[RMDB]
RNA sequence: GGGAACGACUCGAGUAGAGUCGAAAAUACAACGCUGGGAAUUACCGACUCAGGACAAGCAUCGAUCAAACUGAAGCGCGCACGGUUUGGGAGCUUGUUAUUGGAGUCGUGUAAUUCCUGUGCUGAAGCGCGCACGGCAACCGAAAGGUGCGACUAACUAAUAGUUUUGGUUCGCCAAAACUAUUAGAAAAGAAACAACAACAACAAC
Reactivity to 2A3 in 0.01 (KOAc 150mM, MgCl2 10mM, bicine 150mM(pH8.5), 24C), signal-to-noise 7, nucleotides 027 to 156: u210a020c060a110a030c060g010c010u020g000g000g000a000a010u000u000a000c000c010g000a000c010u010c050a080g120g080a000c000a000a000g000c020a100u300c100g100a070u070c030a010a000a000c000u030g050a220a030g020c000g000c000g000c010a010c010g010g000u000u000u000g030g010g010a030g000c000u010u010g020u030u030a150u090u270g220g010a000g000u000c000g010u050g000u040a000a000u000u000c000c000u000g000u000g000c000u010g010a060a030g010c000g000c000g000c010a010c010g010g000c000a010a010c010c010g050a070a040a030g010g000u010g000c010g060a040c050u070a090a000
Reactivity to DMS in 0.01 (KOAc 150mM, MgCl2 10mM, bicine 150mM(pH8.5), 24C), signal-to-noise 3, nucleotides 027 to 156: u000a100c030a090a160c050g020c040u010g000g000g020a070a060u000u000a020c010c010g030a040c000u000c010a130g020g010a030c010a030a050g010c010a200u000c110g000a070u000c000a020a010a020c020u000g010a050a050g040c020g050c030g010c020a300c030g010g010u010u010u010g000g010g020a040g030c020u000u010g010u000u010a060u010u010g020g010a040g020u000c010g000u020g020u000a020a040u000u000c010c000u000g010u000g000c020u000g010a080a040g020c010g010c010g020c010a300c030g000g010c000a070a120c040c030g020a100a120a300g040g010u000g010c020g010a280c050u000a070a300